An RNA of 207 nucleotides, treated with 2A3 and DMS and read out base by base. The 2A3 profile rests on 845 reads. Reactivities are rounded to 0.1 and cut off at 0 and 3. The RNA was probed in 150 mM KOAc, 10 mM MgCl2 and 150 mM bicine (pH 8.5) at 24 C. Source: RMDB library OK3TST, as collected in RNAgym.
RNA sequence: GGGAACGACUCGAGUAGAGUCGAAAACUAAUGAAAUUUUGUCGGAUUCCAUAGGCAUUCUUGGAUACCAGAAAAUAGUAGAUCACACCAAGGUUAAUUCCAAGCUAUCGCUUUUUUUUGAAAUCAAAAGCUGAAGGUGGUGUGGUCGGGUGCCGAGACCGACUAUUAGUUUCGACUAAUAGUCGGUAAAAGAAACAACAACAACAAC
Reactivity to 2A3 in 0.01 (KOAc 150mM, MgCl2 10mM, bicine 150mM(pH8.5), 24C), signal-to-noise 2, nucleotides 027 to 156: c000u070a160a040u130g070a020a060a160u220u230u200u100g070u070c030g060g080a090u060u070c040c030a040u120a030g020g040c030a020u060u040c010u010u070g070g000a050u060a210c010c040a080g230a100a160a060a110u180a050g110u020a000g020a000u010c000a000c000a000c000c000a060a050g060g000u050u070a080a060u280u050c020c010a010a020g020c070u090a070u130c020g130c040u080u050u040u030u020u030u130u300g150a140a120a030u120c020a020a020a000a070g030c060u150g030a020a020g000g070u070g030g000u000g000u010g000g000u000c010g000g000g000u010g060c010c030g000a020g010
Reactivity to DMS in 0.01 (KOAc 150mM, MgCl2 10mM, bicine 150mM(pH8.5), 24C), signal-to-noise 1, nucleotides 027 to 156: c080u020a140a130u000g010a050a120a110u000u000u000u000g040u000c050g010g000a180u000u010c000c020a120u000a140g030g020c040a010u000u010c020u030u010g020g010a200u000a110c060c030a150g000a060a000a050a070u000a070g000u010a100g010a020u010c010a040c020a030c000c000a050a170g020g020u020u010a040a110u010u020c020c010a090a140g020c080u000a080u000c070g000c010u000u000u000u000u000u000u000u000g020a080a120a140u010c150a010a050a010a050g010c030u010g010a070a170g030g050u000g000g030u000g000u000g020g030u000c030g000g000g000u000g030c000c010g010a220g010